[RMDB]
RNA sequence: GGGAACGACUCGAGUAGAGUCGAAAAUCCACCCAUGUUAUGGAGCCUGAAGACCUUCCAGUGGGGCAAGAUGUGGAUGUGGAAGACAGUGAUAUUGAUGAUCCUGACCCUGUGUAAGCCUAGGCUAAAGAGGACUUGUAUUCGUACAAGUCCUCUUAAAAGAAACAACAACAACAAC
Reactivity to 2A3 in 0.01 (KOAc 150mM, MgCl2 10mM, bicine 150mM(pH8.5), 24C), signal-to-noise 1, nucleotides 027 to 126: u020c000c000a030c000c020c000a010u050g060u110u190a190u110g080g010a000g030c000c000u040g070a030a040g100a070c000c010u100u050c030c040a100g020u050g010g020g030g000c040a040a030g020a130u140g030u060g050g030a070u040g010u080g110g010a070a010g030a040c000a000g060u010g160a070u050a070u110u100g090a110u110g010a040u040c010c000u010g040a040c000c000c000u050g020u000g040u120a090a030g010c020c000u050a100g090g000c030u080a090
Reactivity to DMS in 0.01 (KOAc 150mM, MgCl2 10mM, bicine 150mM(pH8.5), 24C), signal-to-noise 4, nucleotides 027 to 126: u010c010c010a120c030c020c020a050u000g010u000u010a100u010g010g010a120g030c030c010u010g010a090a120g000a140c100c030u000u000c030c030a080g030u000g000g000g000g010c110a060a100g000a080u000g000u000g010g010a060u000g010u000g010g000a040a050g000a160c070a040g020u000g010a050u000a070u000u000g000a110u000g000a070u000c010c020u000g000a150c060c010c010u000g010u000g020u010a080a090g010c010c030u010a090g010g010c090u010a090

Structure probing data (2A3 and DMS) for a 177-nucleotide construct. Values cover nucleotides 27 to 126. Reactivities are rounded to 0.1 and cut off at 0 and 3. The reactions ran in a buffer of 150 mM KOAc, 10 mM MgCl2 and 150 mM bicine (pH 8.5), at 24 C. For DMS, 5,213 sequencing reads were counted.